[RMDB]
Notes
This 177-nucleotide RNA was probed chemically with 2A3 and DMS. It was measured as part of the RMDB library TTRDEL. For DMS, 28,778 sequencing reads were counted. The reactions ran in a buffer of 150 mM KOAc, 10 mM MgCl2 and 150 mM bicine (pH 8.5), at 24 C. For 2A3 the reverse transcriptase was SuperScript II with manganese.

RNA sequence: GGGAACGACUCGAGUAGAGUCGAAAAGAUAUGGAGCUAGCCUCAAGGUGACUAUGGGAUCGGAAACGAUCCCACGAAUCACCGAAGGGCUUGGACCUCCUAAGUCAAAGCAUCGUUCGCGAUGCAAGAAAUACGUUUAGUUCGCUAAACGUAUUUCAAAAGAAACAACAACAACAAC
Reactivity to 2A3 in 0.01 (KOAc 150mM, MgCl2 10mM, bicine 150mM(pH8.5), 24C), signal-to-noise 7, nucleotides 027 to 126: g050a020u110a060u170g000g000a010g030c020u010a000g000c010c010u060c050a030a020g000g000u010g000a010c050u050a040u050g000g010g000a000u010c010g030g020a070a070a020c010g000a000u010c010c010c000a000c000g010a020a270u000c000a000c000c000g020a020a010g010g000g000c000u000u030g000g060a040c010c010u000c010c000u050a140a040g090u050c080a160a050a010g000c000a000u010c000g050u080u120c220g010c020g110a010u000g000c000a000a020
Reactivity to DMS in 0.01 (KOAc 150mM, MgCl2 10mM, bicine 150mM(pH8.5), 24C), signal-to-noise 9, nucleotides 027 to 126: g010a050u000a300u010g000g000a030g020c030u000a040g010c000c000u000c020a030a300g000g010u000g010a010c060u000a140u000g000g010g000a010u000c000g000g000a110a080a210c000g010a000u000c000c000c000a000c040g010a060a120u000c000a000c000c000g010a270a210g000g000g010c000u000u000g020g000a130c280c000u000c000c000u010a050a110g010u000c060a090a110a100g000c000a010u000c000g000u000u010c230g020c020g000a010u000g010c010a060a070